RNA sequence: GGGAACGACUCGAGUAGAGUCGAAAAUUCAAUCGAUAUGGACUGUAGGGAGUUAUCUUGAUGCGUUGAAAUCGGAAACGAUGGAGCAUACAGAUAACUUUGAUCUACAGUCCUAAGUCAUAAAAAAUCUCCACUUUAUGUUCGCAUAAAGUGGAGAAAAAGAAACAACAACAACAAC
Reactivity to DMS in 0.01 (KOAc 150mM, MgCl2 10mM, bicine 150mM(pH8.5), 24C), signal-to-noise 2, nucleotides 027 to 126: u010u000c070a070a100u020c150g000a040u020a300u010g010g000a000c000u000g020u000a000g010g030g000a010g000u000u000a000u000c000u020u000g030a020u000g000c010g000u010u000g030a040a130a020u000c000g000g020a150a090a130c020g000a020u000g000g000a120g000c010a000u000a050c070a000g000a020u000a000a010c000u010u000u020g010a080u010c000u000a000c000a000g000u000c000c000u000a000a050g000u000c020a100u020a000a040a090a100a120a110